[RMDB]
RNA sequence: GGGAACGACUCGAGUAGAGUCGAAAAUCAAAGCAGCGAAGGGAUAGGCCAAGGACCAAAUAAAUAAGGCCAAACAGUCAAAUAAUAAAGACUGACGUCCAAUAACCCGAAGCUGCAUCCCAAAAAACAACAGUAAUAUCUUCGGAUAUUACUGUUGAAAAGAAACAACAACAACAAC
Reactivity to 2A3 in 0.01 (KOAc 150mM, MgCl2 10mM, bicine 150mM(pH8.5), 24C), signal-to-noise 2, nucleotides 027 to 126: u110c050a040a040a050g000c030a000g000c010g110a080a030g050g010g000a050u170a150g050g000c000c010a030a090g030g000a010c030c030a110a070a050u130a040a110a000u090a050a060g010g020c000c000a020a010a010c000a010g020u000c020a020a090a130u200a140a070u110a060a250a020g000a000c000u000g020a020c060g010u000c000c000a010a040u070a060a050c020c000c010g070a030a010g000c000u000g000c000a000u000c000c010c000a090a090a040a000a000a000
Reactivity to DMS in 0.01 (KOAc 150mM, MgCl2 10mM, bicine 150mM(pH8.5), 24C), signal-to-noise 3, nucleotides 027 to 126: u000c230a090a110a140g000c020a000g010c010g000a090a300g010g010g000a110u000a100g000g020c000c030a180a070g020g020a010c000c050a050a110a160u000a120a110a050u020a110a190g000g010c010c020a150a150a080c020a000g000u000c010a040a130a200u020a070a080u000a070a160a120g000a000c000u000g000a060c070g010u000c000c000a070a030u000a060a090c010c000c000g000a090a280g010c000u000g000c020a070u020c010c000c020a000a050a020a030a040a120